[RMDB]
RNA sequence: GGGAACGACUCGAGUAGAGUCGAAAAUCGUGCUGUGUGAUCUUUGGCGAUCACUGCCUCUCUGGGCCUGUGUCUUAGGCUCUGCAAGAUCAACCGAGCAAAGCACACGGCCUGCAGAGAGGCAGCGGUUGAUUAAAACCUUCGGGUUUUAAUCAACAAAAGAAACAACAACAACAAC
Reactivity to DMS in 0.01 (KOAc 150mM, MgCl2 10mM, bicine 150mM(pH8.5), 24C), signal-to-noise 2, nucleotides 027 to 126: u000c070g000u010g000c020u010g000u030g010u000g000a030u010c020u000u000u020g010g010c150g000a030u000c020a080c000u010g000c000c000u010c000u010c010u000g010g000g020c000c010u010g030u000g000u020c020u000u010a120g010g010c000u010c000u000g000c120a070a120g000a140u000c220a100a130c090c170g000a020g010c020a060a050a020g020c020a020c000a010c100g010g000c010c000u000g000c020a020g020a020g000a010g010g020c000a000g020c020g010
Reactivity to 2A3 in 0.01 (KOAc 150mM, MgCl2 10mM, bicine 150mM(pH8.5), 24C), signal-to-noise 1, nucleotides 027 to 126: u080c020g050u030g020c070u110g000u040g030u060g160a030u020c040u070u130u200g130g060c100g010a000u010c000a010c020u010g000c000c000u000c000u010c010u000g000g040g000c010c010u000g010u010g040u070c010u020u050a090g120g100c000u000c000u010g040c110a190a070g030a300u140c050a050a070c050c020g010a010g000c030a020a010a020g000c000a000c000a010c120g000g030c000c010u010g020c010a010g000a000g000a000g020g030c020a000g000c010g030